[RMDB]
RNA sequence: GGGAACGACUCGAGUAGAGUCGAAAAGCAUAUGAAAUUCUUCAUGGGAAGUUUCAAGUAGGAAUAGUGAAAAACGUUCCAAUAAUGCUCCCAGCUACUGACAAAGAGAGGGACAAAAAAGCCGCUGAGCGAUACUUAUAUUCGUAUAAGUAUCGCUAAAAGAAACAACAACAACAAC
Reactivity to DMS in 0.01 (KOAc 150mM, MgCl2 10mM, bicine 150mM(pH8.5), 24C), signal-to-noise 3, nucleotides 027 to 126: g010c040a030u000a150u010g010a020a040a030u000u010c020u000u010c110a160u000g010g010g010a070a030g000u000u000u000c030a050a180g020u010a090g020g010a010a010u010a100g040u000g000a020a100a080a110a060c010g010u000u000c000c010a050a110u010a150a020u000g020c020u010c020c000c010a130g010c100u000a040c080u000g000a090c110a040a090a060g000a070g000a080g000g000g010a060c070a020a020a080a110a090a120g020c060c060g010c120u010g000
Reactivity to 2A3 in 0.01 (KOAc 150mM, MgCl2 10mM, bicine 150mM(pH8.5), 24C), signal-to-noise 2, nucleotides 027 to 126: g020c000a020u120a020u160g010a030a000a030u090u040c030u040u080c080a220u300g210g140g020a030a100g020u010u030u100c080a120a050g040u110a040g050g010a020a010u030a180g040u020g080a170a150a020a010a010c000g000u010u020c000c000a050a060u150a070a010u020g000c030u010c010c010c000a000g010c020u070a120c020u090g110a030c070a050a130a010g100a030g000a060g000g010g020a030c060a000a220a020a060a020a080g110c040c070g040c140u090g090
Chemical mapping of a 177-nucleotide RNA with DMS and 2A3. The reactions ran in a buffer of 150 mM KOAc, 10 mM MgCl2 and 150 mM bicine (pH 8.5), at 24 C. Reactivities are given for positions 27 through 126. It was measured as part of the RMDB library OK2TST. For DMS, 2,178 sequencing reads were counted. The 2A3 profile rests on 1,379 reads.